This 177-nucleotide RNA was probed chemically with 2A3 and DMS. The reactions ran in a buffer of 150 mM KOAc, 10 mM MgCl2 and 150 mM bicine (pH 8.5), at 24 C. The DMS profile rests on 4,663 reads.
RNA sequence: GGGAACGACUCGAGUAGAGUCGAAAAGAUAUGGACUGUCUACCCACCAGAGGAAAGAUCAUCGAUCUUCGAACGCUCGGAAACGAGCGUUCGAAGGGAGAUCUGCCUCUGAGGACAGUCCUAAGUCCCUUUCUAGAAGGUUCGCCUUCUAGAAAGGAAAAGAAACAACAACAACAAC
Reactivity to 2A3 in 0.01 (KOAc 150mM, MgCl2 10mM, bicine 150mM(pH8.5), 24C), signal-to-noise 2, nucleotides 027 to 126: g080a070u300a280u300g000g000a000c000u010g000u080c010u080a300c030c050c020a020c050c000a000g000a010g020g030a300a300a130g030a030u040c030a100u300c160g120a150u020c000u010u030c010g030a000a020c000g000c020u000c000g000g130a050a170a120c020g030a000g000c010g000u000u020c010g000a010a000g000g010g010a010g000a000u000c000u000g020c000c010u000c010u010g010a010g030g010a000c000a000g000u010c020c000u000a010a000g120u100c020
Reactivity to DMS in 0.01 (KOAc 150mM, MgCl2 10mM, bicine 150mM(pH8.5), 24C), signal-to-noise 4, nucleotides 027 to 126: g010a160u010a110u010g000g020a040c000u000g010u000c000u000a160c030c020c020a300c110c010a020g000a010g010g000a040a060a020g010a010u000c010a290u000c240g000a120u010c000u000u000c000g020a000a010c000g040c000u000c000g010g010a100a100a200c000g020a030g020c000g000u000u000c000g020a000a010g000g000g000a040g020a020u000c000u000g000c010c000u000c000u000g000a040g010g000a020c010a010g000u000c000c010u000a010a120g000u000c100